This 177-nucleotide RNA was probed chemically with 2A3 and DMS. For 2A3, 2,406 sequencing reads were counted. For DMS, 1,472 sequencing reads were counted.
RNA sequence: GGGAACGACUCGAGUAGAGUCGAAAAGAUAUGGAGACCUCACGCGAAGAACUAUAAACCCCUCGGAAACGAGAACUUUAUAGGGAGCGUGGGUCUCCUAAGUCAAAUCUCGUCUUCGGACGAGAAACACGAUUAACUUCUUCGGAAGUUAAUCGUGAAAAGAAACAACAACAACAAC
Reactivity to 2A3 in 0.01 (KOAc 150mM, MgCl2 10mM, bicine 150mM(pH8.5), 24C), signal-to-noise 1, nucleotides 027 to 126: g030a000u030a030u100g010g000a010g000a000c010c090u300c130a000c010g030c000g100a300a070g000a080a080c000u010a000u030a020a020a010c060c010c000c000u010c010g000g000a050a020a010c000g000a000g000a040a010c000u000u030u010a020u010a020g020g040g000a030g030c000g000u000g010g000g000u020c000u000c000c000u010a000a000g020u020c020a000a000a110u020c010u000c020g010u000c020u050u070c300g080g010a000c000g000a000g010a020a070a010
Reactivity to DMS in 0.01 (KOAc 150mM, MgCl2 10mM, bicine 150mM(pH8.5), 24C), signal-to-noise 2, nucleotides 027 to 126: g000a020u000a290u000g010g000a020g000a010c000c020u010c010a020c000g000c000g020a140a190g000a090a180c000u000a000u000a000a010a040c160c090c100c000u000c000g010g010a100a040a120c010g020a010g020a070a080c130u000u000u000a020u000a010g010g030g010a030g040c000g050u010g000g000g000u000c010u000c000c000u000a000a080g000u000c050a050a130a130u000c000u000c010g000u000c000u020u010c210g020g000a010c010g020a000g020a030a040a130